[RMDB]
RNA sequence: GGGAACGACUCGAGUAGAGUCGAAAAGUGUGCGCCUUACAUUACUACCAAAGGCGAGAUACAUGAAAGCACUGAGCAGACAGCCUCUGUGGACUUCCCACAUUAGUACCUGGUGCAAAGUCCUAGCAUCACCUUCUGGGCUCAUUUCACAGCAAGAGCCUAGCCAUAUAUUCGUAUAUGGCUAGGCAAAAGAAACAACAACAACAAC
Reactivity to 2A3 in 0.01 (KOAc 150mM, MgCl2 10mM, bicine 150mM(pH8.5), 24C), signal-to-noise 2, nucleotides 027 to 156: g010u020g010u040g050c000g010c000c000u060u010a090c050a200u130u210a170c060u080a100c010c130a070a010a000g020g000c020g000a030g020a020u110a020c080a010u110g090a130a050a000g040c030a020c050u050g000a000g000c020a010g070a210c040a040g040c000c030u030c030u030g000u010g080g050a040c030u000u020c030c080c010a020c020a030u110u140a020g030u040a090c020c040u020g040g000u000g040c010a020a050a020g010u020c000c010u020a010g010c020a040u050c010a050c020c010u080u050c040u060g000g060g030c010u000c040a080u010u130u090c070a100c020a020g020c040a050a050g000a000
Reactivity to DMS in 0.01 (KOAc 150mM, MgCl2 10mM, bicine 150mM(pH8.5), 24C), signal-to-noise 1, nucleotides 027 to 156: g030u020g080u010g000c050g000c000c000u010u000a160c030a060u000u010a220c110u040a100c080c040a150a290a120g000g010c010g000a050g000a140u000a090c010a090u050g030a120a080a240g010c090a040c020u000g000a160g060c060a160g010a010c000a150g040c020c000u000c020u000g040u000g010g010a070c040u000u010c000c000c010a070c040a100u000u000a130g060u000a040c010c000u000g000g000u030g020c020a030a000a060g040u000c020c020u000a020g010c010a040u000c010a040c010c040u000u000c030u000g060g020g050c080u010c040a070u030u000u010c060a160c020a100g000c070a070a180g000a200